The data come from the RNA Mapping Database (RMDB), library M2PK50. This 177-nucleotide RNA was probed chemically with 2A3 and DMS. The reactions ran in a buffer of 150 mM KOAc, 10 mM MgCl2 and 150 mM bicine (pH 8.5), at 24 C. Reactivities are given for positions 27 through 126. For 2A3, 1,400 sequencing reads were counted. 2A3 adducts were read by reverse transcription with SuperScript II with manganese.
RNA sequence: GGGAACGACUCGAGUAGAGUCGAAAAGAGUAGUAGUUCGCUACUACUCAAAGGCACAAAAGGCACAGUUCUAAAGUGCAUGGAUCACGCCAAGUGCCCGUGAAAGUAAAUCCUUCGGGAUUUACAACAAGUGCCUUUGAUUCGUCAAAGGCACUUGAAAAGAAACAACAACAACAAC
Reactivity to 2A3 in 0.01 (KOAc 150mM, MgCl2 10mM, bicine 150mM(pH8.5), 24C), signal-to-noise 1, nucleotides 027 to 126: g000a000g000u000a000g000u000a000g000u000u040c160g040c060u000a010c020u010a010c000u000c000a000a020a020g010g010c050a040c020a060a220a030a120g080g030c000a000c030a130g080u260u110c090u230a130a110a010g070u020g030c020a000u120g050g000a080u030c010a000c040g030c000c000a000a050g040u000g020c020c000c000g040u030g030a070a030a010g010u010a010a000a000u000c000c000u020u080c170g050g000g000a000u000u000u010a000c010a010a020
Reactivity to DMS in 0.01 (KOAc 150mM, MgCl2 10mM, bicine 150mM(pH8.5), 24C), signal-to-noise 2, nucleotides 027 to 126: g010a010g000u010a010g010u000a010g020u000u010c270g030c000u000a000c000u020a000c000u010c020a040a010a040g010g000c000a010c010a110a070a120a210g020g030c000a000c050a190g000u000u010c190u020a110a100a090g010u000g000c010a090u000g020g000a130u010c020a030c070g000c000c000a050a170g000u010g000c020c020c020g000u000g000a030a220a190g000u000a000a000a000u000c000c000u000u030c180g020g000g020a000u000u000u000a000c000a130a120